Chemical mapping of a 207-nucleotide RNA with DMS and 2A3.
RNA sequence: GGGAACGACUCGAGUAGAGUCGAAAAGAAGUGAGAGUUGAUAUUAGCAUUCGCCACCUGUUGUUGCGGUGGAGUCUGAUGAAACGCCUUCGCACUGUGGCCUUUGCAUCUAUUAUUGUAUUUAAACUUGGCAGCGACAUUGCAAGGUAAAUGUCAAAAAAUUACCAGCAUUCGUGCUGGUAAUUUUAAAAGAAACAACAACAACAAC
Reactivity to DMS in 0.01 (KOAc 150mM, MgCl2 10mM, bicine 150mM(pH8.5), 24C), signal-to-noise 1, nucleotides 027 to 156: g000a060a120g020u000g010a110g010a060g060u000u010g000a120u000a040u000u000a150g000c010a050u010u000c020g000c020c000a040c030c090u010g020u000u000g000u000u000g010c070g000g040u000g000g010a090g010u000c030u030g040a150u010g020a060a090a060c050g020c010c020u000u010c070g050c030a030c100u000g020u010g010g000c010c040u000u000u010g020c000a130u010c110u000a080u010u000a090u010u000g010u000a120u010u000u000a040a050a080c050u000u010g030g030c050a100g010c010g020a030c040a030u000u010g020c000a080a030g020g020u000a030a050a060u000g010u010c010a000a060
Reactivity to 2A3 in 0.01 (KOAc 150mM, MgCl2 10mM, bicine 150mM(pH8.5), 24C), signal-to-noise 2, nucleotides 027 to 156: g050a030a000g050u050g070a100g010a000g040u000u140g030a050u050a090u190u230a050g020c010a010u040u070c050g040c020c010a080c000c020u040g030u080u040g000u040u040g080c100g000g000u030g010g020a010g010u020c070u050g040a100u100g010a060a070a070c030g000c000c000u030u030c080g020c020a000c010u020g020u060g070g000c000c030u050u090u150g020c080a060u040c040u050a160u210u050a070u060u170g060u010a130u040u210u060a070a070a040c050u090u090g050g000c030a040g010c040g050a030c000a010u030u110g000c010a000a000g000g000u050a050a120a000u100g000u000c000a020a140
Values are in units of 0.01, from 0 to 300, in steps of 10. For DMS the reverse transcriptase was MarathonRT. For DMS, 4,236 sequencing reads were counted.